Chemical mapping of a 177-nucleotide RNA with 2A3 and DMS.
Reactivities are given for positions 27 through 126.
The DMS profile rests on 2,816 reads.
Source: RMDB library OK2TRN, as collected in RNAgym.

RNA sequence: GGGAACGACUCGAGUAGAGUCGAAAAUCUGAGUCUUGGAUCCAUGCACUUUGUCAAGAGGCUGGAAAUCCUGAUUUGGGAGAGAGAAGCCUCGAGAGUUUUACUCGUCUUCUUGAAGAUCCAACCAGUUCUCAGUGAUAUUCGUAUCACUGAGAACAAAAGAAACAACAACAACAAC
Reactivity to 2A3 in 0.01 (KOAc 150mM, MgCl2 10mM, bicine 150mM(pH8.5), 24C), signal-to-noise 3, nucleotides 027 to 126: u020c010u000g020a000g030u000c040u100u090g010g010a030u050c010c010a030u180g040c050a110c300u110u080u100g130u120c020a070a070g010a020g040g000c010u020g040g000a080a080a040u010c030c000u090g110a270u060u060u170g020g030g010a100g010a010g000a000g040a060a020g000c000c040u050c060g000a020g010a010g030u180u030u270u300a090c000u000c000g030u000c010u040u000c000u000u100g040a060a040g030a050u000c010c010a000a060c030c010a050
Reactivity to DMS in 0.01 (KOAc 150mM, MgCl2 10mM, bicine 150mM(pH8.5), 24C), signal-to-noise 4, nucleotides 027 to 126: u010c020u000g000a080g010u010c060u010u010g010g010a030u000c000c040a040u020g010c060a110c030u000u000u010g010u010c230a110a170g000a030g010g010c020u000g020g000a110a090a080u000c000c000u000g010a070u000u000u000g010g010g020a070g010a260g000a240g000a070a020g000c210c070u000c020g010a050g000a110g010u010u010u010u000a090c030u010c000g010u000c010u000u000c030u000u000g010a090a100g010a090u010c010c010a090a100c130c130a100